[RMDB]
RNA sequence: GGGAACGACUCGAGUAGAGUCGAAAAUGUCUGUCUGCGGGUCUUACCAUUUAACGAGCUACGUUUAACUACUUACCUUAAUAGUUAGAAAUAAGAUUCUUAGGUUAGUUUUGAUAGUUUAGCCCUGUUAUAUGGCGUUUUAUCAAAGCGAAGUUUACAAUAUGUAUGGCUUCGGCCAUACAUAUUGAAAAGAAACAACAACAACAAC
Reactivity to DMS in 0.01 (KOAc 150mM, MgCl2 10mM, bicine 150mM(pH8.5), 24C), signal-to-noise 2, nucleotides 027 to 156: u010g020u000c070u010g000u000c040u000g010c050g050g010g010u000c020u000u000a030c030c010a140u010u000u010a050a100c020g020a090g000c050u000a080c070g000u000u010u000a060a040c030u000a040c020u000u000a090c080c090u010u000a040a080u010a090g000u000u000a010g010a050a070a090u000a080a110g010a160u010u010c040u000u000a090g000g010u000u010a070g040u000u000u010u000g010a060u000a060g050u000u000u010a090g010c000c010c060u000g040u000u000a120u000a090u010g020g010c010g020u000u000u000u000a070u000c020a050a000a080g020c030g000a080a130g010u010u000u000a130
Reactivity to 2A3 in 0.01 (KOAc 150mM, MgCl2 10mM, bicine 150mM(pH8.5), 24C), signal-to-noise 3, nucleotides 027 to 156: u080g010u010c010u010g030u010c010u010g100c040g040g010g030u000c030u100u140a020c000c010a010u080u120u040a040a030c050g000a020g040c020u060a030c020g030u040u050u060a030a020c040u020a010c010u090u040a030c010c010u110u140a080a070u070a180g050u060u040a060g110a040a110a030u180a100a040g030a150u160u020c030u060u060a000g020g000u040u030a000g020u040u030u000u070g030a020u040a060g040u030u090u060a010g020c010c010c030u080g060u170u070a160u020a030u160g000g020c030g020u020u020u070u080a060u050c010a030a000a000g040c000g040a060a010g000u020u050u050a020